An RNA of 170 nucleotides, treated with 2A3 and DMS and read out base by base. The reactions ran in a buffer of 150 mM KOAc, 10 mM MgCl2 and 150 mM bicine (pH 8.5), at 24 C.
[RMDB]
RNA sequence: GGGAACGACUCGAGUAGAGUCGAAAAAUGGACGCGAACCGUGAGUGGAACCCUCGAUCCUUUAUUGGGGGGUACACUCGAGGAGUGGAAGGCGGGUAGGGGGGACCCCAGGGUCAACCUACGGAAAGUAUCGCUCAGUUCGCUGAGCGAAAAAGAAACAACAACAACAAC
Reactivity to 2A3 in 0.01 (KOAc 150mM, MgCl2 10mM, bicine 150mM(pH8.5), 24C), signal-to-noise 4, nucleotides 027 to 129: a000u090g060g010a010c000g010c010g060a070a020c040c000g070u070g010a010g010u010g000g000a090a030c000c000c000u000c000g000a080u090c030c070u140u250u180a080u020u040g000g000g000g000g000g000u210a000c000a000c000u000c020g000a020g010g000a080g010u060g010g040a040a040g040g020c050g030g020g020u020a050g010g010g020g000g020g020a010c000c020c010c060a060g020g000g000u050c020a080a040c000c010u040a050c020g030g020a100a040a010g040u060a060
Reactivity to DMS in 0.01 (KOAc 150mM, MgCl2 10mM, bicine 150mM(pH8.5), 24C), signal-to-noise 4, nucleotides 027 to 129: a050u050g060g020a130c030g000c000g000a030a090c030c000g010u050g030a040g030u020g000g020a230a280c000c000c000u010c000g010a010u000c280c180u000u000u000a050u010u010g000g000g000g010g010g010u010a110c040a010c040u000c010g000a090g060g020a090g040u020g000g000a080a050g000g000c100g010g000g020u020a050g000g000g000g000g000g000a020c010c000c010c040a120g000g000g000u010c050a060a070c000c000u000a060c100g000g000a080a080a070g000u030a090

2A3 adducts were read by reverse transcription with SuperScript II with manganese. Values cover nucleotides 27 to 129. The DMS profile rests on 21,103 reads.